[RMDB]
RNA sequence: GGGAACGACUCGAGUAGAGUCGAAAAUGAUUUAUGAAGAUAUGAGUGGGCUACAAGACUCUCCUCAGGAAGAGUCUAUAUACGAUACACCACGAACUUCUCCUCUAUAUGAAGUUCCAAGAGGUGCUAUUUACAUAUCUUUCGAGAUAUGUAAAUAAAAAGAAACAACAACAACAAC
Reactivity to DMS in 0.01 (KOAc 150mM, MgCl2 10mM, bicine 150mM(pH8.5), 24C), signal-to-noise 9, nucleotides 027 to 126: u010g010a130u010u000u000a070u020g010a060a040g000a140u010a070u010g010a220g020u000g000g000g010c070u010a080c200a080a030g010a020c000u000c010u000c010c010u010c230a140g020g010a020a010g000a010g010u000c000u000a020u000a100u000a080c150g000a130u010a120c130a100c000c010a060c070g000a080a060c020u000u000c010u010c080c050u000c080u000a090u000a110u010g010a050a090g010u000u000c010c060a090a070g000a050g000g010u000g010c150
Reactivity to 2A3 in 0.01 (KOAc 150mM, MgCl2 10mM, bicine 150mM(pH8.5), 24C), signal-to-noise 4, nucleotides 027 to 126: u060g020a020u070u120u210a140u150g020a010a040g040a050u130a070u280g050a040g020u010g000g010g030c020u090a030c060a100a010g010a010c000u020c000u010c020c020u150c090a040g080g000a050a050g000a010g000u000c020u000a020u000a010u000a050c040g010a020u020a120c050a020c040c000a010c020g010a020a020c010u020u010c010u000c010c010u000c030u050a140u010a060u270g090a100a040g020u050u000c020c000a040a010g040a020g060g000u030g010c010
Chemical mapping of a 177-nucleotide RNA with DMS and 2A3. The DMS profile rests on 13,475 reads. The 2A3 profile rests on 6,597 reads. For DMS the reverse transcriptase was MarathonRT. High 2A3 reactivity points to a flexible backbone, as in loops and unpaired stretches. Reactivities are given for positions 27 through 126. The RNA was probed in 150 mM KOAc, 10 mM MgCl2 and 150 mM bicine (pH 8.5) at 24 C.